[RMDB]
RNA sequence: GGGAACGACUCGAGUAGAGUCGAAAAUGGGCAGACGAAGCUCGGCGGGACAUGGAGGACGAACAGGACAUGUACGGUGUCACGUCUGUCACCACAUGGAUCUGUAUCUGCAGAGCGUAUGAUAAACCGGAGACCAAUAGUUCGCUAUUGGUCUCCGAAAAGAAACAACAACAACAAC
Reactivity to 2A3 in 0.01 (KOAc 150mM, MgCl2 10mM, bicine 150mM(pH8.5), 24C), signal-to-noise 2, nucleotides 027 to 126: u130g000g040g020c050a020g050a090c050g030a120a010g000c040u000c000g000g040c040g010g040g000a010c020a050u150g080g010a050g050g050a050c050g010a100a030c020a040g010g080a000c000a000u040g040u080a060c120g000g060u000g000u000c030a020c150g170u020c150u110g020u000c010a010c020c000a030c000a000u030g000g020a190u050c000u010g000u020a200u050c030u050g000c010a050g020a010g000c040g050u110a050u120g140a100u130a010a060a080c040
Reactivity to DMS in 0.01 (KOAc 150mM, MgCl2 10mM, bicine 150mM(pH8.5), 24C), signal-to-noise 2, nucleotides 027 to 126: u020g000g000g010c060a040g020a100c070g020a110a140g030c040u000c070g000g040c030g010g000g000a050c110a030u000g020g000a050g000g020a120c140g000a080a040c090a040g030g060a080c000a010u010g000u000a140c180g050g020u000g000u000c020a110c260g000u020c110u050g010u000c000a050c020c010a090c020a000u000g010g000a150u010c030u000g000u010a080u000c040u000g010c080a050g000a090g050c030g030u010a050u000g020a090u000a070a060a120c080